[RMDB]
RNA sequence: GGGAACGACUCGAGUAGAGUCGAAAAUUAAAGCGUGUAGAAAGGAGAGCAGAAAACUGCUUUUCAAACAGAGUAAAACCAAAAGGUUACACGCACUCUGUCAAAAAGAUCGAAAGAUCAAUAAAAAGAUUAUAUCAAGUUUCGACUUGAUAUAAUCAAAAGAAACAACAACAACAAC
Reactivity to 2A3 in 0.01 (KOAc 150mM, MgCl2 10mM, bicine 150mM(pH8.5), 24C), signal-to-noise 2, nucleotides 027 to 126: u050u040a070a030a020g000c030g000u000g030u100a120g190a150a080a030g010g010a000g020a000g050c000a030g070a090a300a020a120c020u020g000c010u000u010u010u000c010a030a070a000c020a000g030a020g020u060a070a200a000a070c030c020a150a100a180a020g120g010u080u050a030c020a010c010g020c010a000c010u020c010u030g020u010c000a000a070a100a070a080g000a020u000c000g030a020a030a020g010a000u010c000a040a110u140a030a010a010a000a000
Reactivity to DMS in 0.01 (KOAc 150mM, MgCl2 10mM, bicine 150mM(pH8.5), 24C), signal-to-noise 1, nucleotides 027 to 126: u010u000a000a160a090g010c000g000u000g000u000a130g030a120a130a050g000g010a040g020a010g020c040a010g000a130a130a070a190c000u000g030c010u000u000u000u000c010a130a110a040c030a010g000a000g040u000a080a030a050a050c010c010a080a090a020a040g040g000u000u000a060c000a020c000g030c020a110c010u000c030u000g000u030c300a020a070a070a090a060g000a010u000c000g030a150a040a180g000a000u000c000a040a080u010a110a070a110a090a100
This 177-nucleotide RNA was probed chemically with 2A3 and DMS. 2A3 adducts were read by reverse transcription with SuperScript II with manganese. Source: RMDB library M2PK90, as collected in RNAgym. The reactions ran in a buffer of 150 mM KOAc, 10 mM MgCl2 and 150 mM bicine (pH 8.5), at 24 C. DMS adducts were read by reverse transcription with MarathonRT.